[RMDB]
RNA sequence: GGGAACGACUCGAGUAGAGUCGAAAAGAAAGAAAAGAAACUACCGAUGAAGACCAGUAUUCUACGCCAGUACCACGGGUCGGUUUUCGUACAGGCGAAGCACGAUGAAAGACAUCGUGCAAAGAAAAUAAUGACCCGAUUUCGAUCGGGUCAUUAUAAAAGAAACAACAACAACAAC
Reactivity to DMS in 0.01 (KOAc 150mM, MgCl2 10mM, bicine 150mM(pH8.5), 24C), signal-to-noise 2, nucleotides 027 to 126: g000a080a160a200g000a070a080a060a100g020a140a110a140c060u020a060c000c030g000a100u030g010a140a100g000a140c000c000a110g000u040a030u000u000c020u000a080c040g050c020c080a060g000u000a030c070c200a250c130g000g000g010u000c030g000g050u000u000u000u010c120g030u050a050c140a090g000g010c000g000a090a060g010c010a000c010g000a000u000g020a110a150a110g030a280c010a000u000c000g040u010g000c000a030a020a070g010a060a020a030
Reactivity to 2A3 in 0.01 (KOAc 150mM, MgCl2 10mM, bicine 150mM(pH8.5), 24C), signal-to-noise 1, nucleotides 027 to 126: g030a020a090a000g090a040a130a020a000g080a000a100a010c040u020a050c000c090g050a060u180g080a090a020g030a010c000c010a000g000u020a300u090u060c040u020a020c000g010c030c000a000g020u000a060c000c000a040c060g050g040g000u020c060g000g010u020u050u010u060c010g000u080a120c050a020g010g000c050g000a000a000g000c000a010c040g020a000u000g130a070a150a000g100a030c000a000u000c040g000u000g000c000a000a000a000g010a000a070a000